[RMDB]
RNA sequence: GGGAACGACUCGAGUAGAGUCGAAAACGUCGCGUGUUCGCACGCGACGAAACGAGAAACGGCAAAUAUGCCGAUCCCAGGCGAUCGUACGCCAUACUCAAAAAAGUCCCUGCUUCGGCAGGGACAAGCAUAACCUUAUCUUCGGAUAAGGUUAUGCAAAAGAAACAACAACAACAAC
Reactivity to DMS in 0.01 (KOAc 150mM, MgCl2 10mM, bicine 150mM(pH8.5), 24C), signal-to-noise 1, nucleotides 027 to 126: c010g050u000c020g010c000g020u000g000u020u030c200g000c000a010c050g010c020g020a000c000g000a020a050a080c090g000a010g000a120a090a120c020g000g010c000a160a100a100u010a110u020g000c030c020g010a120u020c000c000c000a190g000g000c010g010a030u020c200g000u030a230c000g010c000c000a120u000a050c020u010c050a000a050a080a040a090a200g000u000c000c020c000u000g010c000u000u000c160g000g000c030a000g000g000g000a000c000a010a020
Reactivity to 2A3 in 0.01 (KOAc 150mM, MgCl2 10mM, bicine 150mM(pH8.5), 24C), signal-to-noise 3, nucleotides 027 to 126: c010g000u000c000g020c010g000u020g010u060u080c160g000c100a000c010g000c000g000a010c000g000a000a000a010c040g030a020g030a080a120a020c000g020g010c050a050a100a240u300a220u250g020c000c000g020a030u020c010c000c010a020g000g020c010g030a090u160c150g090u180a100c000g010c000c020a010u080a100c040u080c060a020a130a050a000a030a020g000u010c010c000c000u000g000c000u040u060c200g070g000c000a000g020g000g000a000c000a000a000

Record summary: Conditions: 150 mM KOAc, 10 mM MgCl2 and 150 mM bicine (pH 8.5), 24 C. Chemical mapping of a 177-nucleotide RNA with DMS and 2A3. The DMS profile rests on 972 reads. For 2A3, 2,726 sequencing reads were counted.